Notes: An RNA of 207 nucleotides, treated with 2A3 and DMS and read out base by base. The 2A3 profile rests on 936 reads. It was measured as part of the RMDB library PDB130. The RNA was probed in 150 mM KOAc, 10 mM MgCl2 and 150 mM bicine (pH 8.5) at 24 C.
[RMDB]
RNA sequence: GGGAACGACUCGAGUAGAGUCGAAAAAAGACCCUGACUGGACGAGCGGAAGCGAAGGCUGUGCUCUUGGACUAAUGUUGCGAUGAAGGACGAAGGCUAGAGGAUCGAAAUCGAUUAGAUACCGUUUUAGUUCUAGCAGUAAACGAUGCCGACUGGACAAGUAACUUACGUUCGCGUAAGUUACUUGAAAAGAAACAACAACAACAAC
Reactivity to 2A3 in 0.01 (KOAc 150mM, MgCl2 10mM, bicine 150mM(pH8.5), 24C), signal-to-noise 2, nucleotides 027 to 156: a010a020g140a050c030c000c040u060g060a100c080u060g060g000a010c030g000a060g040c070g030g030a110a000g020c000g120a040a070g060g060c040u050g060u110g020c010u000c000u000u030g030g020a000c050u020a090a040u140g010u090u070g020c070g060a120u050g020a040a030g050g010a010c030g040a020a050g050g020c000u060a040g010a070g040g040a020u030c080g000a020a100a140u140c010g020a010u080u000a050g000a030u080a190c030c070g010u040u020u030u150a010g000u000u080c020u000a000g000c020a000g020u080a000a130a010c050g030a030u080g040c010c020g030a030c020u020g000g000a020
Reactivity to DMS in 0.01 (KOAc 150mM, MgCl2 10mM, bicine 150mM(pH8.5), 24C), signal-to-noise 3, nucleotides 027 to 156: a110a100g010a120c000c010c000u020g030a120c060u000g030g010a070c010g010a110g010c020g010g000a140a080g020c030g000a140a110g020g020c070u000g030u000g040c020u030c030u000u000g010g000a130c070u000a070a110u000g020u000u010g000c030g000a100u000g020a100a070g010g010a090c050g000a080a110g030g000c010u010a090g010a110g000g010a070u000c040g010a040a050a090u010c090g000a100u000u000a100g020a180u000a060c010c010g000u010u000u000u010a090g020u000u000c020u000a060g000c040a070g030u000a040a040a100c040g000a100u010g020c000c040g010a180c010u010g000g010a300